[RMDB]
RNA sequence: GGGAACGACUCGAGUAGAGUCGAAAAGCUGCCUCUGACGUCCUUCUCCCCCGGAAACGGGGCCGAAGGGUGGUAAGGCGUGUCGCCUGGCGCUCGCACGGGUAUGCGUGGCGGUCGACCCUGGCCGAGUCGUCCUAUAGUUCGCUAUAGGACGACUAAAAGAAACAACAACAACAAC
Reactivity to 2A3 in 0.01 (KOAc 150mM, MgCl2 10mM, bicine 150mM(pH8.5), 24C), signal-to-noise 2, nucleotides 027 to 126: g050c010u020g010c010c010u070c160u260g040a040c010g020u020c000c000u030u040c030u030c000c000c000c000c000g020g000a000a010a020c000g000g010g010g000c000c010g000a000a000g010g000g010u040g040g000u050a040a060g010g020c020g010u010g000u010c050g030c060c110u080g120g040c020g020c040u050c020g060c000a100c130g040g000g120u140a100u270g030c010g020u040g080g020c010g000g000u010c000g050a100c000c000c060u070g150g140c030c010g020
Reactivity to DMS in 0.01 (KOAc 150mM, MgCl2 10mM, bicine 150mM(pH8.5), 24C), signal-to-noise 3, nucleotides 027 to 126: g000c010u000g010c010c000u000c120u020g010a150c110g000u000c010c010u000u010c000u010c300c010c000c010c000g000g010a070a070a210c020g010g000g030g030c030c080g000a030a000g010g010g020u010g000g010u000a130a060g000g010c000g010u000g040u000c050g030c020c030u010g010g010c050g000c010u000c020g020c060a070c150g010g020g000u000a040u010g020c030g010u000g020g020c010g020g010u000c030g000a110c060c010c020u010g020g010c010c020g000